RNA sequence: GGGAACGACUCGAGUAGAGUCGAAAAUACACUAGUUAAUCUCCGUCUGAGGUUAAAUAGAAGAGCUUAAUGAGACUAGCUGAAUGGAAGCCUGUUACCGGGCUGAUGUUUAUGCGAAAUGCUAAUACGGUGACUACGCUCGUAGAUAUUCAAGUGCCAAUUGCAUACUCUUCGGAGUAUGCAAUUGAAAAGAAACAACAACAACAAC
Reactivity to DMS in 0.01 (KOAc 150mM, MgCl2 10mM, bicine 150mM(pH8.5), 24C), signal-to-noise 2, nucleotides 027 to 156: u010a080c060a160c000u000a030g000u000u010a030a020u000c010u010c000c150g030u000c070u040g010a020g010g000u000u000a000a030a060u000a030g020a110a090g030a130g020c020u000u010a140a080u000g000a170g020a080c030u000a160g000c000u010g010a090a050u000g000g000a300a060g020c000c020u000g000u000u000a090c200c070g020g050g040c000u010g000a210u020g000u000u010u000a040u000g000c000g010a060a090a110u000g010c090u000a060a050u010a040c020g000g000u000g000a080c050u000a080c070g030c050u000c050g000u000a060g000a170u000a030u000u000c070a020a160g020u000g000c070
Reactivity to 2A3 in 0.01 (KOAc 150mM, MgCl2 10mM, bicine 150mM(pH8.5), 24C), signal-to-noise 3, nucleotides 027 to 156: u160a000c050a020c020u010a020g000u020u000a000a020u000c000u020c050c020g200u070c120u100g000a000g000g000u000u030a020a010a020u050a050g230a300a030g080a030g050c080u160u190a090a050u230g080a030g010a050c020u010a010g010c010u000g020a030a010u020g020g020a020a000g000c020c010u020g070u120u030a020c020c030g020g000g000c010u000g000a010u020g020u020u040u030a150u170g010c010g060a060a050a070u160g010c070u090a010a040u030a030c010g030g000u000g020a000c000u030a030c070g030c020u020c070g080u100a060g050a130u100a060u120u180c100a140a020g000u000g100c000